Structure probing data (DMS) for a 177-nucleotide construct.
RNA sequence: GGGAACGACUCGAGUAGAGUCGAAAAGAUAUGGAAUUUUGUCCAGUCCCACGAUGUUACUACCCACCAACAGAGUCGGAAACGACUUAGUUGAGGUAACAUUAGGACUGGACAAAAUUCCUAAGUCGUACCCAAAUAACUUCGGUUAUUUGGGUACAAAAGAAACAACAACAACAAC
Reactivity to DMS in 0.01 (KOAc 150mM, MgCl2 10mM, bicine 150mM(pH8.5), 24C), signal-to-noise 3, nucleotides 027 to 126: g010a030u010a300u030g000g020a010a020u000u010u000u020g020u000c000c010a010g000u010c010c010c300a140c300g040a010u010g010u000u000a000c020u000a090c060c030c160a300c140c010a010a010c000a300g000a010g020u010c000g000g010a060a110a180c010g010a020c000u000u010a060g010u000u000g000a090g000g000u000a000a000c010a000u000u010a160g000g000a020c000u000g000g000a010c010a000a000a000a000u000u000c000c000u000a010a070g020u030c140

For DMS the reverse transcriptase was MarathonRT. Conditions: 150 mM KOAc, 10 mM MgCl2 and 150 mM bicine (pH 8.5), 24 C.